[RMDB]
RNA sequence: GGGAACGACUCGAGUAGAGUCGAAAAUACGUGCUUGUAACACACUACACACUCGUUUUGUAUUCGAGAAGUAGUUGCAACAACGGUCCCCUUAUUGCCUGACAAGCUGAGGGCCACCCUUCUAUCCGCUAUGUUAGUAGUUCGCUACUAACAUAGCAAAAGAAACAACAACAACAAC
Reactivity to DMS in 0.01 (KOAc 150mM, MgCl2 10mM, bicine 150mM(pH8.5), 24C), signal-to-noise 5, nucleotides 027 to 126: u010a100c070g020u010g000c180u010u000g010u000a070a090c070a100c150a070c060u010a030c040a100c230a250c020u000c010g000u000u010u020u010g020u000a190u000u000c020g010a020g020a300a110g010u000a020g000u000u000g010c060a060a070c070a050a050c060g000g000u000c110c020c000c050u000u000a030u000u010g020c000c010u000g020a170c210a100a230g000c040u000g000a040g010g000g010c120c060a060c030c000c050u000u000c090u000a080u010c240c180
Reactivity to 2A3 in 0.01 (KOAc 150mM, MgCl2 10mM, bicine 150mM(pH8.5), 24C), signal-to-noise 8, nucleotides 027 to 126: u180a020c030g020u030g030c100u050u040g020u080a090a000c040a010c010a010c110u050a010c060a000c020a020c030u020c020g030u020u030u090u270g210u100a220u070u090c000g010a000g010a090a010g000u020a010g010u010u030g010c030a030a030c010a030a020c020g020g070u100c040c010c000c010u040u120a130u170u210g000c000c020u020g040a040c030a080a000g000c030u020g020a030g000g020g000c020c010a040c020c000c000u080u100c060u090a130u090c080c050